Overview: An RNA of 177 nucleotides, treated with DMS and 2A3 and read out base by base. The DMS profile rests on 5,174 reads.

RNA sequence: GGGAACGACUCGAGUAGAGUCGAAAAGAUAUGGAUUUAGGGAGACCUCGUAUCGGAAACGAUACACGCGAGGUCGAAGAACUAACUGUCCUAAGUCAAAAGUCGUCAACCUUCGGGUUGACGACAAGCAUUAAAUACCGUUCGCGGUAUUUAAUGCAAAAGAAACAACAACAACAAC
Reactivity to DMS in 0.01 (KOAc 150mM, MgCl2 10mM, bicine 150mM(pH8.5), 24C), signal-to-noise 5, nucleotides 027 to 126: g000a080u010a270u000g010g000a020u000u000u000a010g000g000g000a110g020a010c000c010u000c000g030u000a020u000c000g020g000a130a070a150c010g000a020u000a040c070a130c300g040c190g010a010g000g020u000c000g010a050a100g000a120a140c050u000a020a050c300u000g000u020c000c000u010a030a070g010u000c040a070a050a100a150g000u000c000g000u000c010a000a000c000c000u000u010c200g030g010g020u000u000g010a000c000g000a000c000a000a050
Reactivity to 2A3 in 0.01 (KOAc 150mM, MgCl2 10mM, bicine 150mM(pH8.5), 24C), signal-to-noise 3, nucleotides 027 to 126: g060a010u130a080u210g040g000a020u020u020u030a030g000g020g000a060g010a020c010c000u010c040g000u050a010u020c010g000g030a040a030a040c010g000a000u040a060c110a040c190g250c150g010a000g000g000u000c000g000a010a020g000a010a010c050u040a030a030c080u100g070u010c000c000u050a100a030g040u010c010a010a050a050a120g010u000c000g000u000c000a010a000c010c000u020u050c220g120g000g000u010u000g000a000c010g000a000c010a000a000